[RMDB]
RNA sequence: GGGAACGACUCGAGUAGAGUCGAAAACACGGAGGCUAGCACCCAGACCAUCAACUUUGACGAACGGUCGCGAUGGGGCGGUCAUCUGAAGACCAUCAUGCACACCAACAUGCCCAACGUGAACGAGUACAUGUUCAGCAACAAGUUCAAGGCGAGGCCCUUAAUCCCCGUUCGCGGGGAUUAAGGGAAAAGAAACAACAACAACAAC
Reactivity to 2A3 in 0.01 (KOAc 150mM, MgCl2 10mM, bicine 150mM(pH8.5), 24C), signal-to-noise 2, nucleotides 027 to 156: c040a010c000g050g020a030g000g080c010u090a040g020c120a230c020c040c000a000g030a010c000c000a060u080c100a100a180c090u290u150u260g080a100c130g040a150a000c030g000g000u000c000g000c080g210a260u180g000g010g010g030c000g000g060u030c040a300u040c010u090g040a040a000g010a050c000c000a010u160c010a040u060g100c080a010c000a010c050c000a020a060c000a040u170g120c000c020c000a030a030c160g100u050g010a060a050c060g010a020g100u060a010c070a210u230g000u010u080c030a000g000c020a030a120c040a130a080g000u060u080c030a020a000g010g000c040g000a030g050g030